[RMDB]
RNA sequence: GGGAACGACUCGAGUAGAGUCGAAAACUAGCGAGGGAACCUUGUCUGGGGGUGAACCGCGAAACAGUUCCAGGCUCACCGUUAGAAAUCCUGUCUUUCGGAGUUCGAGCGGUUAAAUAAAAGAGAGACUAAGCAUGUAGCGCCUUGAGCGUAGGUUGUAGAUAUUACAGUUCGCUGUAAUAUCUACAAAAGAAACAACAACAACAAC
Reactivity to DMS in 0.01 (KOAc 150mM, MgCl2 10mM, bicine 150mM(pH8.5), 24C), signal-to-noise 1, nucleotides 027 to 156: c040u010a120g040c030g010a080g050g010g010a080a070c020c020u000u010g040u020c070u000g060g010g030g040g060u000g010a150a160c000c010g000c020g000a190a090a120c120a110g010u000u010c060c060a140g020g040c040u000c020a070c020c030g000u020u000a100g000a020a030a010u000c010c010u000g030u000c050u000u000u000c060g040g020a090g040u000u000c020g010a080g000c000g000g010u000u050a060a060a170u000a030a040a060a090g020a080g030a110g010a100c020u000a080a230g010c050a080u010g040u000a140g000c040g010c000c020u010u040g010a170g000c000g010u000a070g020g000u000u000
Reactivity to 2A3 in 0.01 (KOAc 150mM, MgCl2 10mM, bicine 150mM(pH8.5), 24C), signal-to-noise 5, nucleotides 027 to 156: c010u020a020g010c000g020a300g030g010g020a010a010c010c010u040u120g020u010c010u020g020g000g000g000g020u020g010a040a020c000c010g010c020g030a060a080a020c110a060g060u230u170c000c000a000g000g010c010u040c020a010c000c000g000u010u030a010g000a000a040a000u010c000c020u020g000u030c020u000u030u030c010g000g000a000g000u020u020c010g010a010g000c010g000g010u040u080a110a120a040u120a020a000a010a010g010a000g000a000g010a000c030u080a060a060g070c090a120u130g090u220a040g020c010g000c020c010u180u250g100a100g070c020g030u030a040g050g080u020u020
This 207-nucleotide RNA was probed chemically with DMS and 2A3. The RNA was probed in 150 mM KOAc, 10 mM MgCl2 and 150 mM bicine (pH 8.5) at 24 C. It was measured as part of the RMDB library ARCHII.